[RMDB]
RNA sequence: GGGAACGACUCGAGUAGAGUCGAAAAGAUAUGGACCUGAUCGUACAAUUGAUCUGUAGACAUGAGCUGACUCGGAAACGAGUCUAGCUCAACAGCUACGAUCAAUUGUACGAUCAGGUCCUAAGUCCUAGACAUAUAGCUUCGGCUAUAUGUCUAGAAAAGAAACAACAACAACAAC
Reactivity to DMS in 0.01 (KOAc 150mM, MgCl2 10mM, bicine 150mM(pH8.5), 24C), signal-to-noise 2, nucleotides 027 to 126: g000a090u000a300u010g000g010a010c010c010u010g010a020u000c000g000u000a010c010a020a000u000u000g000a000u000c010u010g050u000a010g010a070c120a260u000g000a010g010c000u000g010a010c000u000c000g000g020a130a070a240c020g010a040g010u010c000u010a000g050c000u010c000a030a050c300a140g020c000u010a000c020g000a020u000c000a000a000u010u000g010u010a000c000g000a000u000c000a000g010g000u000c000c000u000a000a040g000u000c060